[RMDB]
RNA sequence: GGGAACGACUCGAGUAGAGUCGAAAAGAUAUGGAGGACGCUCACGGAAUUGCUAUUGGGUCGGAAACGACCCAUUAGCGGAGAUGUGAUCUGCGUCCUCCUAAGUCAAAGUCAGCUUCGGCUGACACCAGAAUGGAAACUUCGGUUUCCAUUCUGGAAAAGAAACAACAACAACAAC
Reactivity to 2A3 in 0.01 (KOAc 150mM, MgCl2 10mM, bicine 150mM(pH8.5), 24C), signal-to-noise 2, nucleotides 027 to 126: g020a030u080a010u180g040g000a020g010g000a000c030g010c010u010c020a000c030g040g130a150a130u180u160g010c010u020a010u010u020g000g020g000u000c010g000g030a070a060a050c020g010a020c000c020c000a000u000u000a000g010c010g040g040a070g020a040u230g010u050g050a070u020c140u100g000c010g000u000c000c000u000c010c000u010a010a000g010u000c020a080a060a000g000u010c010a000g000c030u060u190c280g210g000c000u000g000a010c000a020
Reactivity to DMS in 0.01 (KOAc 150mM, MgCl2 10mM, bicine 150mM(pH8.5), 24C), signal-to-noise 2, nucleotides 027 to 126: g020a050u000a300u000g010g010a010g000g000a000c020g020c000u010c010a010c010g010g010a280a140u010u000g010c010u010a010u000u000g030g000g030u010c000g000g000a100a050a240c000g020a020c000c000c000a000u000u000a010g010c000g010g010a060g020a300u010g000u000g000a020u010c230u000g010c010g020u000c000c000u010c000c010u000a000a060g000u000c040a090a090a150g000u000c020a000g010c000u010u010c240g040g020c000u000g000a030c010a070

The record gives the reactivity of an RNA of 177 nucleotides to 2A3 and DMS. The RNA was probed in 150 mM KOAc, 10 mM MgCl2 and 150 mM bicine (pH 8.5) at 24 C.